The record gives the reactivity of an RNA of 207 nucleotides to 2A3. Conditions: 150 mM KOAc, 10 mM MgCl2 and 150 mM bicine (pH 8.5), 24 C. It was measured as part of the RMDB library M2RFPK. 2A3 adducts were read by reverse transcription with SuperScript II with manganese.
[RMDB]
RNA sequence: GGGAACGACUCGAGUAGAGUCGAAAAAGAGCUUUGCGAGACCUACCAAGGGUGAAGAGAUACCAUCCAAGGAGCUGAAGAGAAAUCUCACGUUAGACGCCUGGGGAACUCGGACUAAAUUAAAAAAAAAACAUCAACCCGUUCGCGGGUUGAUGAAGUAAAGACAGUAGUUCGCUACUGUCUUUACAAAAGAAACAACAACAACAAC
Reactivity to 2A3 in 0.01 (KOAc 150mM, MgCl2 10mM, bicine 150mM(pH8.5), 24C), signal-to-noise 1, nucleotides 027 to 156: a000g040a020g000c070u160u160u120g020c050g010a030g000a060c000c060u060a010c110c000a060a080g010g000g000u060g020a160a020g030a010g000a000u110a090c030c010a020u000c030c030a170a020g010g000a020g040c090u110g100a120a030g080a020g020a090a060a030u040c020u020c020a030c060g040u030u030a150g020a160c110g040c110c000u010g000g050g000g000a130a160c000u040c100g000g050a000c110u070a100a150a200u270u300a160a040a000a040a000a000a000a000a000a000c000a010u000c010a010a000c000c000c040g000u000u000c120g020c010g060g000g000u010u000g000a010u030g000a010a000